This 207-nucleotide RNA was probed chemically with DMS and 2A3. It was measured as part of the RMDB library OK3TST. Reactivities are rounded to 0.1 and cut off at 0 and 3. Reactivities are given for positions 27 through 156. The 2A3 profile rests on 851 reads.
RNA sequence: GGGAACGACUCGAGUAGAGUCGAAAAUCACAAUGCCAAACUGCAUUGUCUCAUGAAGAACCACUUGGAAUCCCCCUGAGGUCCAGAAAACACGUCUGACAUCAGCUGCCAGGCCCAUCUUGCGUUUGCAGUCCAAGGUCAGUCUACAGCAGAAGCACACUAUAGCUCGAUUCGUCGAGCUAUAGUGAAAAGAAACAACAACAACAAC
Reactivity to DMS in 0.01 (KOAc 150mM, MgCl2 10mM, bicine 150mM(pH8.5), 24C), signal-to-noise 1, nucleotides 027 to 156: u010c030a030c000a000a060u000g000c000c010a120a140a260c080u000g000c010a050u010u000g030u000c000u000c120a100u020g010a140a130g040a080a090c030c010a090c030u020u010g020g000a110a190u020c040c000c020c050c030u020g020a060g010g030u000c010c000a170g000a060a050a030a080c090a120c080g030u020c020u010g030a040c020a040u000c150a100g040c040u000g000c020c030a070g030g000c030c010c050a030u010c090u010u000g000c000g000u000u010u030g010c100a130g020u000c010c030a060a130g010g050u000c020a040g000u000c040u010a050c030a070g020c000a070g030a100a090g020c030a200
Reactivity to 2A3 in 0.01 (KOAc 150mM, MgCl2 10mM, bicine 150mM(pH8.5), 24C), signal-to-noise 2, nucleotides 027 to 156: u080c020a010c010a040a020u000g000c000c040a270a090a070c070u110g030c000a000u000u000g080u000c020u020c040a120u140g080a110a070g020a080a010c040c030a040c120u070u180g010g040a160a150u180c000c000c000c020c030u060g020a030g030g000u060c010c040a000g000a020a090a020a020c070a000c020g030u000c000u000g010a000c000a100u070c010a020g000c000u020g000c000c040a000g000g020c070c020c000a060u080c070u040u130g000c040g060u020u050u100g010c020a040g010u000c000c030a060a000g110g000u050c020a000g010u000c030u070a050c040a020g020c020a010g060a130a000g020c060a010